[RMDB]
RNA sequence: GGGAACGACUCGAGUAGAGUCGAAAAGAUAUGGAGUUCGAGACUCGCUAAGGAGGUCGGAAACGACUACCCACCCUUAGAACUACGAGACGAGAACUCCUAAGUCAAAGGGACGUUCGCGUCCCAAUCCGUAACUUGAGUUCGCUCAAGUUACGGAAAAAGAAACAACAACAACAAC
Reactivity to DMS in 0.01 (KOAc 150mM, MgCl2 10mM, bicine 150mM(pH8.5), 24C), signal-to-noise 2, nucleotides 027 to 126: g000a000u000a300u000g000g000a040g000u000u010c000g000a300g000a040c000u000c050g000c040u000a000a010g000g000a100g000g000u000c010g000g000a120a090a090c000g000a000c030u000a090c040c070c130a300c030c000c020u020u000a040g000a030a080c040u020a300c080g000a020g060a040c000g000a300g000a000a020c000u000c000c000u000a000a080g000u000c030a100a050a070g020g010g000a010c030g000u010u000c120g030c040g000u000c000c000c000a000a020
Reactivity to 2A3 in 0.01 (KOAc 150mM, MgCl2 10mM, bicine 150mM(pH8.5), 24C), signal-to-noise 2, nucleotides 027 to 126: g050a050u060a060u220g010g000a030g030u030u000c010g020a010g000a030c000u010c020g000c050u000a000a010g000g000a030g000g000u030c010g000g090a000a080a050c030g040a000c000u120a100c040c090c050a060c000c000c020u030u010a020g000a100a060c110u200a040c180g000a000g020a000c000g010a020g000a030a010c010u000c000c000u010a040a030g020u010c040a080a040a100g000g000g010a010c000g030u030u080c300g030c020g130u040c010c010c000a010a020
This 177-nucleotide RNA was probed chemically with DMS and 2A3. For DMS the reverse transcriptase was MarathonRT. Conditions: 150 mM KOAc, 10 mM MgCl2 and 150 mM bicine (pH 8.5), 24 C. The DMS profile rests on 872 reads. The 2A3 profile rests on 2,353 reads. DMS (dimethyl sulfate) methylates the pairing face of unpaired adenines and cytosines.